An RNA of 207 nucleotides, treated with DMS and 2A3 and read out base by base.
Source: RMDB library OK3TST, as collected in RNAgym.
The reactions ran in a buffer of 150 mM KOAc, 10 mM MgCl2 and 150 mM bicine (pH 8.5), at 24 C.
RNA sequence: GGGAACGACUCGAGUAGAGUCGAAAAUGAACAAAAAUCCAAUAUGCUGAAUUUGCGUGGAUUGACACCCGGGGGCUCAGGACAAUAUUGUAAAACAAUCUACAAUACAAGAAAUGGUAAAAAAGAAAUUUACCAAGAAUGUUAUAAUGUAACAAUCACAUAACGUAAAAUUCGUUUUACGUUAUGUAAAAGAAACAACAACAACAAC
Reactivity to DMS in 0.01 (KOAc 150mM, MgCl2 10mM, bicine 150mM(pH8.5), 24C), signal-to-noise 3, nucleotides 027 to 156: u000g010a090a200c070a010a100a100a050a060u030c000c010a050a110u000a070u010g020c030u000g000a120a140u000u000u010g030c040g080u010g000g000a100u010u000g010a190c050a080c020c000c020g000g000g030g100g040c100u000c060a120g030g030a100c040a060a110u000a010u010u000g000u000a010a060a120a160c110a100a160u000c040u000a020c010a020a040u000a030c030a050a120g010a090a090a080u000g010g000u010a000a020a040a080a080a160g010a110a090a120u000u000u010a010c000c000a040a160g000a050a060u010g010u000u000a040u000a050a100u000g020u000a000a140c010a040a300u000c040
Reactivity to 2A3 in 0.01 (KOAc 150mM, MgCl2 10mM, bicine 150mM(pH8.5), 24C), signal-to-noise 2, nucleotides 027 to 156: u060g020a050a000c030a020a140a000a020a020u000c010c010a030a050u150a130u180g000c060u080g060a260a240u170u180u100g000c020g040u020g000g040a020u010u050g010a010c000a040c010c010c020g010g040g000g000g060c020u020c080a040g050g060a030c030a050a030u060a010u100u040g000u060a050a070a000a020c010a030a000u010c000u030a010c030a020a060u030a080c010a030a040g080a090a100a040u020g000g000u010a060a010a000a000a030a030g020a010a120a010u010u020u000a000c000c000a000a020g080a020a000u030g000u080u070a090u020a290a030u110g030u040a020a030c000a040a030u080c040